[RMDB]
RNA sequence: GGGAACGACUCGAGUAGAGUCGAAAAGAUAUGGAGUUACUACCCACCAUAGUUAGCCUAUGAAGUCCGAGAAUUUCGGAAACGAAAUUCUCGGAUGGAGGCUGGACUAUGAGGUAACUCCUAAGUCGAAGACGUAGGUCUUCGGACCUACGUCUUCAAAAGAAACAACAACAACAAC
Reactivity to 2A3 in 0.01 (KOAc 150mM, MgCl2 10mM, bicine 150mM(pH8.5), 24C), signal-to-noise 1, nucleotides 027 to 126: g200a040u210a300u300g000g000a000g000u050u000a030c070u300a300c000c000c000a030c020c000a000u010a000g010u020u030a000g030c020c000u300a300u300g060a000a010g010u000c010c000g010a000g000a020a000u030u000u000c010g140g040a260a030a000c000g000a000a000a000u030u000c000u020c030g030g000a010u000g000g000a000g000g030c030u010g020g070a000c000u020a010u000g010a000g040g040u000a000a000c000u000c010c020u080a120a060g300u240c080
Reactivity to DMS in 0.01 (KOAc 150mM, MgCl2 10mM, bicine 150mM(pH8.5), 24C), signal-to-noise 1, nucleotides 027 to 126: g000a100u000a140u010g000g030a030g000u000u010a000c000u010a210c020c010c010a300c140c000a020u000a000g050u000u000a050g010c000c000u000a230u030g010a230a190g000u000c000c000g000a030g000a000a010u000u000u000c000g010g000a060a030a210c000g010a010a010a000u000u000c000u000c000g000g010a000u000g000g000a010g000g000c000u000g020g030a010c000u000a000u000g000a100g040g010u000a020a010c000u000c000c000u010a030a090g010u000c140
Chemical mapping of a 177-nucleotide RNA with 2A3 and DMS. Values are in units of 0.01, from 0 to 300, in steps of 10. The reactions ran in a buffer of 150 mM KOAc, 10 mM MgCl2 and 150 mM bicine (pH 8.5), at 24 C.